[RMDB]
RNA sequence: GGGAACGACUCGAGUAGAGUCGAAAAGCGUACUACCGACCCUUUUGACGUUUAUCAUGGUGUAGUGCUUCCCAAAUAGGAAGCACGCAGAUACCAUGUAAGAACGAUAAGGGUCGGUAUCGCAAAAGGUCGAAGAUCGCUUCGGCGAUCUUCGACCGUUCCAACGAAACUUCGGUUUCGUUGGAACAAAAGAAACAACAACAACAAC
Reactivity to 2A3 in 0.01 (KOAc 150mM, MgCl2 10mM, bicine 150mM(pH8.5), 24C), signal-to-noise 2, nucleotides 027 to 156: g000c000g050u090a040c060u030a030c010c010g010a010c000c000c000u040u000u040u170g280a200c030g000u010u010u010a240u240c000a000u000g000g000u050g000u100a160g000u000g030c020u070u000c040c000c040a210a300a040u290a040g000g010a000a000g000c000a000c030g040c000a000g060a060u050a010c020c000a000u000g000u010a030a110g030a020a010c000g000a000u030a080a020g030g010g000u160c000g010g000u000a000u000c000g000c000a040a160a000a000g000g000u000c000g000a000a020g000a030u010c020g010c130u200u300c300g030g000c000g000a000u010c000u040u000c000g000a000c000c010
This 207-nucleotide RNA was probed chemically with 2A3. The data come from the RNA Mapping Database (RMDB), library RNAMAK. For 2A3 the reverse transcriptase was SuperScript II with manganese.